[RMDB]
RNA sequence: GGGAACGACUCGAGUAGAGUCGAAAAGGGGUCACCCGAAGAACAGACAUUAUCAUGAGUUUCCGCUUCUGGAGCGUUCCACUGAAGCCUCCACGGUGGGACGCGUUGAAAGAAGCGGAAACUCAUGAUAAUGUCUGGGAGGGUGACGGAGGCACCCGACAUAUGAGUAGUUCGCUACUCAUAUGUCAAAAGAAACAACAACAACAAC
Reactivity to DMS in 0.01 (KOAc 150mM, MgCl2 10mM, bicine 150mM(pH8.5), 24C), signal-to-noise 2, nucleotides 027 to 156: g010g010g010g030u000c010a030c010c010c000g000a160a180g020a170a220c010a020g000a020c000a000u000u000a000u000c000a020u010g010a060g000u000u000u000c000c000g000c000u010u000c000u000g020g000a240g030c020g020u010u000c000c000a040c000u000g000a080a130g010c060c020u000c030c030a300c040g000g000u000g020g030g010a020c000g030c010g000u000u010g020a170a200a040g010a020a010g000c000g000g020a000a000a000c010u000c000a010u000g000a000u000a010a000u010g000u000c000u000g000g000g010a200g010g020g020u000g010a010c010g010g000a110g020g030c050a210c020c010c020